[RMDB]
RNA sequence: GGGAACGACUCGAGUAGAGUCGAAAAGAUAUGGAGCUGUGGAGCUGAGAUCGGAAACGAUCUACCAGCGUUGAAACAGUCUCCUAAGUCAAACCCCUUUCAACGUGUUCGCACGUUGAAAGGGGAAGUAGGCUAAAUACUUCGGUAUUUAGCCUACAAAAGAAACAACAACAACAAC
Reactivity to DMS in 0.01 (KOAc 150mM, MgCl2 10mM, bicine 150mM(pH8.5), 24C), signal-to-noise 4, nucleotides 027 to 126: g000a010u000a100u000g000g010a000g000c020u000g000u000g000g000a040g030c000u000g010a050g010a010u000c000g020g010a020a010a050c000g010a010u000c000u010a080c300c020a010g000c010g020u010u010g000a100a210a020c000a000g000u000c020u000c000c000u000a010a080g010u000c000a060a160a110c000c000c000c000u000u000u000c000a000a000c000g010u000g010u000u010c260g020c020a010c000g020u020u000g010a000a000a000g000g000g000g000a000a010
Reactivity to 2A3 in 0.01 (KOAc 150mM, MgCl2 10mM, bicine 150mM(pH8.5), 24C), signal-to-noise 1, nucleotides 027 to 126: g010a010u020a010u070g000g010a000g010c010u000g000u030g020g000a010g000c000u000g020a000g010a030u000c000g000g010a010a020a000c000g010a000u000c010u010a140c230c110a000g010c010g070u280u040g010a010a000a010c020a010g170u080c020u000c020c000u000a020a000g000u000c030a030a060a300c000c000c000c000u000u000u000c000a000a000c020g000u010g100u100u110c300g040c140a000c000g010u000u000g000a000a000a000g000g000g000g000a030a000